Notes:
This 177-nucleotide RNA was probed chemically with 2A3 and DMS. Reactivities are given for positions 27 through 126. The DMS profile rests on 1,397 reads.

RNA sequence: GGGAACGACUCGAGUAGAGUCGAAAACUGUCACGAUUGAGGCCUCACAAGUGAUUGGAUCUCAUGAGGAGAUUGAGGUUACGUGUUUUGGCAAGAAUCUCACGGAGGUGACGUUCUGUGUACAUCACUACCGGACUUUGUUCGCAAAGUCCGGUAGAAAAGAAACAACAACAACAAC
Reactivity to 2A3 in 0.01 (KOAc 150mM, MgCl2 10mM, bicine 150mM(pH8.5), 24C), signal-to-noise 1, nucleotides 027 to 126: c030u010g010u110c030a030c060g030a030u050u070g060a020g060g010c000c000u010c000a010c070a210a000g030u000g040a060u080u140g100g000a030u060c020u000c070a140u230g210a060g220g010a030g020a030u100u150g060a070g100g000u020u110a010c030g020u100g000u030u060u070u090g050g000c010a000a100g120a100a130u100c010u010c040a010c060g120g020a080g150g000u030g020a000c030g000u070u000c010u020g100u030g160u150a110c030a110u130c030a030
Reactivity to DMS in 0.01 (KOAc 150mM, MgCl2 10mM, bicine 150mM(pH8.5), 24C), signal-to-noise 2, nucleotides 027 to 126: c040u000g030u000c030a100c070g000a200u000u000g010a130g000g010c020c020u020c070a100c070a070a140g040u010g010a040u000u000g030g010a030u010c020u000c030a140u000g020a230g030g000a020g000a060u000u010g020a080g000g030u010u000a030c080g010u000g020u000u000u000u030g020g030c020a090a020g010a070a060u000c160u000c050a010c010g010g030a170g000g030u000g000a010c020g020u000u010c020u000g020u000g000u000a080c120a050u000c120a140